Structure probing data (2A3 and DMS) for a 207-nucleotide construct. Values cover nucleotides 27 to 156. DMS (dimethyl sulfate) methylates the pairing face of unpaired adenines and cytosines. The data come from the RNA Mapping Database (RMDB), library OK3TST. For DMS, 2,999 sequencing reads were counted.
[RMDB]
RNA sequence: GGGAACGACUCGAGUAGAGUCGAAAAUAUUACCGGUUGCAUGGUGAAAUUCAAAGAUUUACAUGAGCCAUCCGGAAGCAGGAAAGGCAUGGUUUCAUUCAUGGCAUCUCUUAUAUUACUAUUAUGCUGAGAGAGGGAAUUUAACAGAGUAGCUCCGUAUACAAAGCCUAUUCGUAGGCUUUGUAUAAAAAGAAACAACAACAACAAC
Reactivity to 2A3 in 0.01 (KOAc 150mM, MgCl2 10mM, bicine 150mM(pH8.5), 24C), signal-to-noise 2, nucleotides 027 to 156: u160a050u090u070a140c030c000g010g030u070u090g030c020a000u000g000g040u020g080a080a020a000u160u140c080a120a180a050g030a050u110u130u210a080c000a040u040g030a000g020c000c000a030u040c000c040g010g070a070a020g070c090a020g000g060a030a040a020g010g000c000a010u010g000g000u040u090u070c040a060u110u100c020a020u050g060g000c000a050u000c050u000c010u090u060a100u010a030u300u100a030c010u030a070u300u030a080u130g060c110u070g000a000g000a000g000a010g050g000g000a050a060u080u060u030a130a040c050a030g090a030g030u050a000g010c000u010c130c080g000
Reactivity to DMS in 0.01 (KOAc 150mM, MgCl2 10mM, bicine 150mM(pH8.5), 24C), signal-to-noise 2, nucleotides 027 to 156: u010a100u020u000a130c020c010g010g010u000u000g010c000a090u000g010g000u000g000a060a050a080u000u010c040a070a100a140g010a120u020u000u000a050c040a060u000g000a120g000c040c020a050u020c010c050g000g030a120a140g030c030a070g010g020a070a060a130g030g000c050a040u000g020g020u000u000u000c040a060u000u000c000a100u000g040g030c030a070u000c030u010c020u000u000a130u000a130u010u000a100c050u000a160u010u000a080u000g020c110u000g000a100g020a090g000a070g050g000g000a070a070u000u010u000a050a130c050a090g000a060g010u000a050g020c020u000c030c030g000